This 207-nucleotide RNA was probed chemically with 2A3. 2A3 adducts were read by reverse transcription with SuperScript II with manganese. The data come from the RNA Mapping Database (RMDB), library RNAMAK.
RNA sequence: GGGAACGACUCGAGUAGAGUCGAAAACGCUGGGCACGAUGGUAGGGGAGCUGAGUACUGAAGCGCGCACGGUACCAGCGAGGAUCCGAGAGUAGUGCCUGUGCUGAAGCGCGCACGGCAACCGAAAGGUGCGAUCAGGUGUGUUUCGACACACCAAUCUACAUUGCAUCUUCGGAUGCAAUGUAGAAAAAGAAACAACAACAACAAC
Reactivity to 2A3 in 0.01 (KOAc 150mM, MgCl2 10mM, bicine 150mM(pH8.5), 24C), signal-to-noise 2, nucleotides 027 to 156: c050g030c020u090g020g010g010c000a000c010g080a110u060g100g030u040a030g000g030g000g000a010g000c000u020g030a050g070u000a000c000u030g080a280a080g000c070g000c010g000c070a040c030g010g000u000a000c000c000a010g010c020g010a170g010g000a000u000c000c030g030a080g030a010g150u110a010g020u000g000c000c010u000g000u040g000c000u050g050a100a020g010c020g000c010g010c000a000c020g050g000c080a110a070c020c010g050a100a080a020g040g000u030g000c010g020a050u130c100a100g000g020u000g030u000g010u000u130u160c170g090a020c000a000c000a010c010c030a000a040